[RMDB]
RNA sequence: GGGAACGACUCGAGUAGAGUCGAAAAUACUUAGUACGCGCGUAGUUGCAGGCAAUCCGGGUGCAGCAACUGACGCGGAAGACUUUUCCCAGAGUGUGCGCUUCAACUGGCGUGCUGAGUAGUGCACGAAUUGCACGUACGUUCGCGUACGUGCAAAAGGUUAGAGUUAGUUCGCUAACUCUAACCUAAAAGAAACAACAACAACAAC
Reactivity to 2A3 in 0.01 (KOAc 150mM, MgCl2 10mM, bicine 150mM(pH8.5), 24C), signal-to-noise 3, nucleotides 027 to 156: u080a000c000u010u000a000g010u000a010c020g000c010g000c010g030u020a000g010u010u010g000c040a110g100g000c010a030a130u120c120c090g230g030g090u050g020c000a010g000c010a020a000c000u080g180a050c000g000c000g010g000a000a000g120a070c030u160u130u040u030c000c000c000a000g040a010g030u110g000u010g010c010g010c010u020u050c060a280a280c130u040g000g010c000g010u000g020c000u000g000a000g000u050a010g000u030g000c000a000c020g030a060a100u040u010g000c000a000c000g010u000a000c000g020u020u020c110g000c010g070u000a000c000g000u000g000c000a000a000a000
Reactivity to DMS in 0.01 (KOAc 150mM, MgCl2 10mM, bicine 150mM(pH8.5), 24C), signal-to-noise 2, nucleotides 027 to 156: u020a000c040u010u010a080g020u010a040c030g010c000g010c030g030u000a020g000u000u010g020c030a180g030g000c040a030a160u000c060c260g000g040g040u000g010c000a300g040c010a060a040c010u000g020a030c040g000c010g010g000a060a090g000a130c150u000u010u000u000c000c000c020a180g030a160g050u000g010u000g010c040g000c000u000u000c030a080a120c050u010g030g040c060g000u000g000c000u020g020a040g020u000a050g030u000g020c020a070c030g000a080a220u020u010g020c000a020c000g010u000a010c000g020u000u010c300g000c000g040u000a010c000g010u010g020c000a000a010a050